[RMDB]
The record gives the reactivity of an RNA of 177 nucleotides to 2A3 and DMS.
RNA sequence: GGGAACGACUCGAGUAGAGUCGAAAAGGGGCAGCCACAUCGAGGAGGACAUCUACCCUCUUUAUCUGAGCAACGGGCAGGCCAUAAGACAUAACAGCCUGGCGGCUGAGCUGGCAGCGCUGCCGCACCAGUAGACUUAAUUCGUUAAGUCUACUGGAAAAGAAACAACAACAACAAC
Reactivity to 2A3 in 0.01 (KOAc 150mM, MgCl2 10mM, bicine 150mM(pH8.5), 24C), signal-to-noise 9, nucleotides 027 to 126: g090g010g000g000c010a010g020c010c010a060c020a110u140c060g020a030g010g010a020g010g020a030c020a180u060c060u120a120c020c020c000u020c000u040u090u050a140u040c070u070g090a020g040c020a070a160c040g000g100g000c010a010g020g000c000c000a030u080a070a020g100a030c030a060u130a110a020c010a030g000c000c000u060g100g010c020g030g020c040u060g020a010g020c020u030g090g030c050a040g010c050g000c060u020g000c000c010g030c010a020
Reactivity to DMS in 0.01 (KOAc 150mM, MgCl2 10mM, bicine 150mM(pH8.5), 24C), signal-to-noise 9, nucleotides 027 to 126: g010g000g010g010c030a040g010c020c040a100c130a070u000c110g010a040g010g010a050g010g010a110c140a100u010c160u010a140c130c010c010u000c020u000u000u000a060u010c070u000g000a060g010c050a080a080c100g000g000g000c020a050g000g010c020c040a090u010a090a140g010a130c090a050u010a100a140c210a140g010c010c020u000g000g000c050g000g010c020u000g000a130g010c070u000g000g010c110a100g010c110g010c020u000g000c010c010g000c080a180